An RNA of 177 nucleotides, treated with 2A3 and DMS and read out base by base. The RNA was probed in 150 mM KOAc, 10 mM MgCl2 and 150 mM bicine (pH 8.5) at 24 C. For 2A3 the reverse transcriptase was SuperScript II with manganese. The DMS profile rests on 1,226 reads.
RNA sequence: GGGAACGACUCGAGUAGAGUCGAAAAGAAGAAGAUUAUCUAAGUCUAAGACCUUGUUUCAAACUAACAAGGGCGCAUGGAGGAAGGCCGGACCUCCAUACUUAGACAAGCGCGAUCCGGCCGAGAAACCGAUCCCAUAGUUCGCUAUGGGAUCGGUAAAAGAAACAACAACAACAAC
Reactivity to 2A3 in 0.01 (KOAc 150mM, MgCl2 10mM, bicine 150mM(pH8.5), 24C), signal-to-noise 2, nucleotides 027 to 126: g100a030a000g060a030a010g020a080u110u140a100u200c060u110a170a000g000u010c000u000a010a000g020a070c000c000u000u000g090u000u000u090c180a140a100a050c050u090a000a020c010a000a000g000g000g030c010g000c050a000u030g000g010a010g030g000a150a250g000g000c000c030g010g020a090c000c010u000c000c000a010u010a030c000u000u000a000g000a000c030a090a000g090c080g030c080g100a030u010c000c000g000g060c000c000g000a050g010a050a140
Reactivity to DMS in 0.01 (KOAc 150mM, MgCl2 10mM, bicine 150mM(pH8.5), 24C), signal-to-noise 1, nucleotides 027 to 126: g000a090a040g020a000a000g000a160u000u010a050u050c030u000a090a160g030u010c000u000a000a000g000a160c000c030u020u020g070u000u000u010c290a290a150a130c300u050a020a010c000a020a040g050g000g000c110g000c300a090u000g010g000a050g000g010a110a070g000g010c000c040g000g000a020c000c040u000c000c000a000u020a000c000u000u000a000g000a040c000a000a150g050c060g080c140g000a050u000c000c020g000g010c060c000g000a070g000a050a080